[RMDB]
Structure probing data (DMS and 2A3) for a 177-nucleotide construct.
Reactivities are given for positions 27 through 126.
RNA sequence: GGGAACGACUCGAGUAGAGUCGAAAAUUGACUUCCAUAGUGAUAAACCUUGAUUCUAUGACUGUUUACUGCACUUCCAUUAGCCCUUCUUUGGAAAAAGAAAGCACAGAUUCAGGUGAGGUGCCACAGCCAGUGGAUUAUUCGUAAUCCACUGGCUAAAAGAAACAACAACAACAAC
Reactivity to DMS in 0.01 (KOAc 150mM, MgCl2 10mM, bicine 150mM(pH8.5), 24C), signal-to-noise 2, nucleotides 027 to 126: u040u000g000a090c090u000u000c070c000a130u000a110g000u010g010a120u010a030a170a080c040c060u030u000g010a070u000u000c030u010a060u000g000a080c090u000g000u000u000u000a050c090u010g010c140a090c070u000u000c010c030a060u000u010a120g000c120c070c040u010u000c030u000u010u000g010g020a040a100a020a050a070g010a060a040a100g000c030a030c100a070g000a090u000u000c070a020g000g030u000g000a060g000g010u000g000c060c070a080c220
Reactivity to 2A3 in 0.01 (KOAc 150mM, MgCl2 10mM, bicine 150mM(pH8.5), 24C), signal-to-noise 1, nucleotides 027 to 126: u050u080g060a000c040u080u000c050c020a110u030a080g090u090g030a070u070a090a110a010c030c030u070u080g080a060u020u090c020u010a070u080g060a130c050u050g130u000u050u070a100c050u030g010c070a040c060u010u000c050c010a100u080u130a120g000c010c000c050u050u170c000u000u030u000g070g050a040a010a000a040a040g080a030a060a000g000c000a020c000a070g130a070u070u080c000a000g030g080u060g040a000g010g030u030g010c010c000a010c010
It was measured as part of the RMDB library OK2TRN. For DMS the reverse transcriptase was MarathonRT. Conditions: 150 mM KOAc, 10 mM MgCl2 and 150 mM bicine (pH 8.5), 24 C.